The record gives the reactivity of an RNA of 177 nucleotides to 2A3 and DMS. The RNA was probed in 150 mM KOAc, 10 mM MgCl2 and 150 mM bicine (pH 8.5) at 24 C. DMS adducts were read by reverse transcription with MarathonRT. For 2A3 the reverse transcriptase was SuperScript II with manganese. Source: RMDB libraries RFM100 and RFMREP, as collected in RNAgym.

RNA sequence: GGGAACGACUCGAGUAGAGUCGAAAAAGGAGCAGACCCAUGAAGUUCAAGCACAUUCUGAUGCUCACCCUGGGCGCCGCCGCGAUUGCAGCACUGCCGGCCAUCGCGCAGACCGCUCCGCCACAGGGCACAUAAAUCUUUUCGAAGAUUUAUGUGCAAAAGAAACAACAACAACAAC
Reactivity to 2A3 in 0.01 (KOAc 150mM, MgCl2 10mM, bicine 150mM(pH8.5), 24C), signal-to-noise 9, nucleotides 027 to 126: a010g050g000a020g000c030a020g030a160c010c010c030a020u110g070a090a060g070u120u150c120a060a020g050c020a030c030a120u130u100c080u170g130a180u050g020c010u020c020a050c000c010c010u020g000g000g000c030g010c040c030g030c030c010g000c010g010a020u000u060g000c010a010g010c030a060c280u200g030c030c030g070g000c010c000a020u010c010g000c010g000c010a010g030a060c020c070g010c010u020c000c010g010c010c000a100c010a060g050g040
Reactivity to DMS in 0.01 (KOAc 150mM, MgCl2 10mM, bicine 150mM(pH8.5), 24C), signal-to-noise 9, nucleotides 027 to 126: a100g010g010a030g020c010a090g010a200c040c020c030a070u020g010a080a080g000u010u010c140a120a070g000c060a050c080a170u010u010c130u000g010a120u000g010c020u000c060a130c060c010c010u000g000g010g010c040g010c090c060g000c100c030g020c020g010a030u010u010g000c020a080g010c050a140c150u010g010c070c040g000g010c020c050a010u000c020g010c010g000c090a060g000a120c120c080g010c010u000c050c020g010c020c020a070c110a080g010g000